[RMDB]
RNA sequence: GGGAACGACUCGAGUAGAGUCGAAAACCAGAUGACGGUCCUGCCAUGAGACCGCAACGAGAGCAUGUCGCAUCGAAUGGACCCGGGGAGUCGGCAGCUUGCCCCACGGAUGAGCGCCUAAUGCCGGAAGAGACGUGCAACUUCGGUUGCACGUCAACCACCAUAUUUUGUUCGCAAAAUAUGGUGGAAAAGAAACAACAACAACAAC
Reactivity to DMS in 0.01 (KOAc 150mM, MgCl2 10mM, bicine 150mM(pH8.5), 24C), signal-to-noise 2, nucleotides 027 to 156: c010c020a140g030a160u000g020a070c010g000g020u000c040c010u000g000c080c150a050u000g020a040g030a070c030c070g040c010a090a100c070g000a160g020a220g030c060a070u040g020u000c010g000c030a090u000c090g010a070a230u010g000g000a100c030c000c060g000g000g000g000a150g030u000c010g020g020c020a050g040c030u000u000g000c000c010c000c040a210c090g000g020a100u010g000a050g010c040g000c020c040u010a070a080u000g010c040c010g000g040a080a180g010a150g000a040c010g030u000g000c000a000a000c010u010u010c270g020g000u000u000g000c000a000c000g020u000c000a000a050
Reactivity to 2A3 in 0.01 (KOAc 150mM, MgCl2 10mM, bicine 150mM(pH8.5), 24C), signal-to-noise 4, nucleotides 027 to 156: c010c000a010g080a150u110g030a060c030g000g030u010c000c020u030g140c060c040a100u110g030a040g010a140c010c050g020c040a060a060c070g080a030g000a020g150c090a100u150g020u110c040g000c040a040u040c060g040a040a040u070g020g020a010c020c000c020g000g000g010g000a050g060u110c040g040g000c020a060g030c050u070u100g040c010c000c020c010a050c070g000g040a150u100g010a010g000c030g050c000c010u070a090a020u080g020c010c000g030g030a050a040g080a010g000a040c000g000u000g000c000a000a000c000u010u030c160g080g000u000u000g000c000a010c020g000u000c000a000a010